RNA sequence: GGGAACGACUCGAGUAGAGUCGAAAAGCAUCCAGUACAAGCGUACCGGUGCUGCUGUUGCAGCUUACAAGGUCGUCGAGAACCGUUUCAACAAGUACCGCGACGCCGUCCGUGAAGAAUUCGGCAUGGAGAAGGACGAAGAGUUCGCUCGCGCCUACGCAGAGUGAAUUUUCGAAUUCACUCUGCGAAAAGAAACAACAACAACAAC
Reactivity to 2A3 in 0.01 (KOAc 150mM, MgCl2 10mM, bicine 150mM(pH8.5), 24C), signal-to-noise 3, nucleotides 027 to 156: g050c050a060u070c010c010a020g030u080a030c070a170a050g070c050g080u050a120c000c010g000g030u040g010c010u020g000c080u050g050u110u110g000c030a030g030c040u120u090a070c050a110a030g010g010u040c040g090u140c070g050a030g030a140a070c030c020g010u070u110u070c040a060a050c010a060a000g050u060a050c010c000g000c060g030a010c030g040c000c010g020u030c010c030g030u030g040a040a100g080a050a090u160u080c050g010g000c030a060u150g080g000a060g000a110a160g020g010a000c000g000a060a060g090a030g090u060u080c050g000c070u010c000g030c000g020c030c000u020a010
Reactivity to DMS in 0.01 (KOAc 150mM, MgCl2 10mM, bicine 150mM(pH8.5), 24C), signal-to-noise 2, nucleotides 027 to 156: g030c080a140u050c010c000a100g030u010a050c050a110a290g020c170g030u010a050c030c000g040g060u010g000c020u000g010c030u000g030u000u000g030c040a100g020c070u000u000a070c140a140a060g050g010u010c090g050u000c040g000a170g010a090a050c020c030g030u020u010u010c070a040a090c110a040a170g000u000a070c040c020g030c050g040a090c040g060c020c000g000u000c030c000g000u010g020a150a080g000a090a130u000u000c000g010g000c040a070u010g000g010a100g020a140a060g000g000a140c040g000a070a100g000a170g010u000u000c050g020c010u000c010g020c030g000c050c000u010a130
Source information:
Chemical mapping of a 207-nucleotide RNA with 2A3 and DMS. The RNA was probed in 150 mM KOAc, 10 mM MgCl2 and 150 mM bicine (pH 8.5) at 24 C. 2A3 is a SHAPE reagent: it acylates the 2'-hydroxyl of flexible nucleotides of all four kinds. For 2A3, 1,637 sequencing reads were counted.